An RNA of 177 nucleotides, treated with DMS and 2A3 and read out base by base.
For DMS, 1,999 sequencing reads were counted.
DMS adducts were read by reverse transcription with MarathonRT.
The reactions ran in a buffer of 150 mM KOAc, 10 mM MgCl2 and 150 mM bicine (pH 8.5), at 24 C.
RNA sequence: GGGAACGACUCGAGUAGAGUCGAAAAUCUUCCCUUCUUCGGAAGGGAAGAAAAAGGAGACCGCGGCCACGCCGAGUAGGAUCGAGGGUACAGUCUCCAAAGACUUAGAUUCUUCGGAAUCUAAGUCCAAUGGUGGAAUCUUCGGAUUCCACCAUUGAAAAGAAACAACAACAACAAC
Reactivity to DMS in 0.01 (KOAc 150mM, MgCl2 10mM, bicine 150mM(pH8.5), 24C), signal-to-noise 2, nucleotides 027 to 126: u000c010u000u000c010c000c000u000u000c000u000u000c170g000g000a020a010g000g020g010a000a000g000a010a040a070a160a160g000g010a020g020a020c010c010g040c300g000g000c000c020a000c010g010c010c010g000a250g020u020a040g010g010a090u010c010g000a160g000g010g000u000a010c030a040g000u000c000u000c010c000a060a050a110g000a020c000u000u000a000g000a000u000u000c000u010u020c210g020g000a020a000u000c000u000a000a000g000u000c000
Reactivity to 2A3 in 0.01 (KOAc 150mM, MgCl2 10mM, bicine 150mM(pH8.5), 24C), signal-to-noise 2, nucleotides 027 to 126: u020c010u010u000c000c000c010u010u010c040u040u040c140g110g010a000a030g000g000g010a000a000g020a010a020a000a000a000g000g000a000g000a000c000c000g030c050g040g020c000c000a000c010g040c010c000g050a070g160u300a040g090g030a300u020c020g060a230g000g010g010u010a000c010a010g000u000c000u010c000c010a010a000a010g000a000c000u010u010a000g010a030u010u020c010u020u040c180g120g000a000a000u010c000u000a000a000g000u000c000